Description: An RNA of 177 nucleotides, treated with DMS and 2A3 and read out base by base. The RNA was probed in 150 mM KOAc, 10 mM MgCl2 and 150 mM bicine (pH 8.5) at 24 C.
RNA sequence: GGGAACGACUCGAGUAGAGUCGAAAACAGUGAUACGAGCAGUUAUACGCAUGGGAUAAAAUAACAUUGGGCCACUGUAAAUUGAGAUGAAGUAACCAUUUUCAUCUCUUCUGCAGGGACUAGACAUCACUGGCAAUCAAUUCGUUGAUUGCCAGUGAAAAGAAACAACAACAACAAC
Reactivity to DMS in 0.01 (KOAc 150mM, MgCl2 10mM, bicine 150mM(pH8.5), 24C), signal-to-noise 1, nucleotides 027 to 126: c060a050g000u020g000a040u010a030c080g000a090g040c030a050g000u000u000a020u000a180c050g010c130a070u030g000g000g010a180u010a070a110a220a070u050a130a150c050a100u050u000g020g040g000c010c000a040c000u000g010u010a010a040a040u010u030g000a020g010a040u000g000a000a020g010u000a020a060c280c210a170u040u020u000u000c000a000u000c000u000c000u010u000c020u000g000c040a020g000g020g000a060c010u030a040g010a110c170a040u000
Reactivity to 2A3 in 0.01 (KOAc 150mM, MgCl2 10mM, bicine 150mM(pH8.5), 24C), signal-to-noise 4, nucleotides 027 to 126: c020a020g040u030g080a040u050a120c060g030a050g060c070a040g040u100u040a110u040a080c090g040c080a060u110g020g070g020a040u120a090a190a040a030u100a070a050c050a100u040u200g090g060g000c030c010a170c090u000g000u020a200a140a130u060u040g010a000g010a000u000g010a010a010g040u090a070a040c100c040a060u080u040u020u000c000a000u000c000u010c000u020u010c010u000g000c010a000g030g020g010a020c010u020a050g030a050c030a020u010